An RNA of 207 nucleotides, treated with 2A3 and DMS and read out base by base. The RNA was probed in 150 mM KOAc, 10 mM MgCl2 and 150 mM bicine (pH 8.5) at 24 C. DMS (dimethyl sulfate) methylates the pairing face of unpaired adenines and cytosines.
RNA sequence: GGGAACGACUCGAGUAGAGUCGAAAAUACACAUUCGCUCAUACAUGUAUGACCGUUAACUACAGAGUCUACACUAAAAUGAUUGAACAAUAGAUAGUCUACCAUUGUUUCGUAUUCAGAUAGUACAGCGUAGUACAUGGCAUCUUCACAAAUUAUAAAGACAUAGUGGUUUCGACCACUAUGUCUUAAAAGAAACAACAACAACAAC
Reactivity to 2A3 in 0.01 (KOAc 150mM, MgCl2 10mM, bicine 150mM(pH8.5), 24C), signal-to-noise 3, nucleotides 027 to 156: u090a000c040a000c040a100u130u090c080g070c080u090c020a020u030a160c050a040u100g030u020a020u090g040a050c020c030g040u030u050a090a060c050u080a020c040a020g140a040g070u080c060u050a020c070a010c070u120a040a090a040a050u070g070a040u050u070g060a060a000c020a050a010u020a040g090a080u080a060g120u020c060u050a060c040c000a020u030u040g070u060u040u070c030g040u020a050u030u060c020a020g030a120u030a020g020u020a040c070a030g010c040g040u010a020g010u010a080c000a030u010g000g020c060a070u040c040u140u130c050a020c040a080a050a020u200u280a020u300a040
Reactivity to DMS in 0.01 (KOAc 150mM, MgCl2 10mM, bicine 150mM(pH8.5), 24C), signal-to-noise 2, nucleotides 027 to 156: u010a090c060a040c050a170u010u000c090g030c070u030c030a170u000a060c060a060u010g010u010a040u000g000a130c120c020g000u010u000a100a120c050u010a040c080a300g010a130g020u000c030u010a050c040a040c050u000a020a050a050a090u010g010a060u000u010g030a060a040c000a050a070u010a090g020a160u010a090g020u000c030u000a070c040c030a080u000u000g000u000u000u000c060g000u000a090u000u000c040a200g000a240u020a020g000u000a050c030a070g030c010g030u000a230g010u000a010c020a020u010g000g000c050a080u000c050u000u000c010a060c070a050a050a120u010u010a150u020a090

For DMS the reverse transcriptase was MarathonRT.